[RMDB]
RNA sequence: GGGAACGACUCGAGUAGAGUCGAAAAGAUAUGGACAAUGAUGUGUGGGAGGCCGUAUUUCGGAAACGAAAUACAGGCUCACAUUGAGUCCUAAGUCAAAACUGACGGAGCUUCGGCUCCGUCAGAAUCAGAUGUCAUCGUUCGCGAUGACAUCUGAAAAAGAAACAACAACAACAAC
Reactivity to DMS in 0.01 (KOAc 150mM, MgCl2 10mM, bicine 150mM(pH8.5), 24C), signal-to-noise 1, nucleotides 027 to 126: g000a040u000a140u010g000g010a000c000a140a230u020g000a030u010g050u000g080u020g050g030g010a120g040g040c000c000g000u000a000u000u010u000c020g000g030a030a020a090c020g010a010a030a000u000a000c000a060g040g010c000u000c010a000c000a000u000u000g000a300g000u000c000c000u000a010a100g000u000c010a070a110a090a180c020u010g020a010c000g010g000a000g010c000u000u020c190g010g000c000u000c000c010g000u000c010a000g000a000a040
Reactivity to 2A3 in 0.01 (KOAc 150mM, MgCl2 10mM, bicine 150mM(pH8.5), 24C), signal-to-noise 1, nucleotides 027 to 126: g010a020u080a000u050g020g000a020c030a110a280u220g050a060u020g030u000g120u270g230g300g060a300g190g000c030c020g010u020a000u000u000u000c000g040g000a040a000a000c000g010a000a010a000u020a020c010a010g030g040c020u070c010a000c010a000u030u080g020a000g010u000c000c000u000a040a030g040u030c020a000a000a210a210c030u020g000a000c030g000g030a000g000c010u140u230c300g130g000c000u010c000c000g000u010c000a000g000a110a000
Source information: Chemical mapping of a 177-nucleotide RNA with DMS and 2A3. The reactions ran in a buffer of 150 mM KOAc, 10 mM MgCl2 and 150 mM bicine (pH 8.5), at 24 C. For DMS the reverse transcriptase was MarathonRT. The data come from the RNA Mapping Database (RMDB), library TTRDEL.